[RMDB]
RNA sequence: GGGAACGACUCGAGUAGAGUCGAAAAGAAUAUUGACUCAUAGGGGUUAGGUCAAGGUCGUAAGGAUAGCUGGGCCAUUAGGAUAUUUUACCUGUGAAUCUUUCAAAUAUGAGCUGGCAAUAGUGAGUCAAGUGUAACCGUUCGCGGUUACACUUGAAAAAGAAACAACAACAACAAC
Reactivity to DMS in 0.01 (KOAc 150mM, MgCl2 10mM, bicine 150mM(pH8.5), 24C), signal-to-noise 2, nucleotides 027 to 126: g000a200a080u000a060u000u000g000a140c010u010c030a070u000a100g010g010g010g000u000u000a080g020g010u030c030a040a070g000g020u000c140g010u010a080a090g010g000a070u010a080g000c010u020g000g000g020c060c030a040u010u000a030g010g000a140u010a080u000u000u010u000a120c030c020u010g030u000g010a040a080u000c040u000u000u000c050a040a090a080u000a040u010g000a060g000c120u000g010g000c050a030a060u020a110g020u000g000a090g010
Reactivity to 2A3 in 0.01 (KOAc 150mM, MgCl2 10mM, bicine 150mM(pH8.5), 24C), signal-to-noise 1, nucleotides 027 to 126: g020a070a030u030a080u110u070g010a000c000u020c030a020u090a080g000g100g030g000u030u100a020g050g060u050c050a000a050g090g000u040c040g060u100a020a020g150g100a180u060a050g100c020u020g000g080g000c020c000a050u000u130a020g020g000a000u000a150u140u200u120u060a110c020c040u000g030u000g060a100a030u010c010u020u100u000c060a070a100a010u100a110u050g020a000g000c000u020g030g030c000a000a100u050a030g070u030g120a000g050
Background:
The record gives the reactivity of an RNA of 177 nucleotides to DMS and 2A3. For DMS the reverse transcriptase was MarathonRT. Conditions: 150 mM KOAc, 10 mM MgCl2 and 150 mM bicine (pH 8.5), 24 C.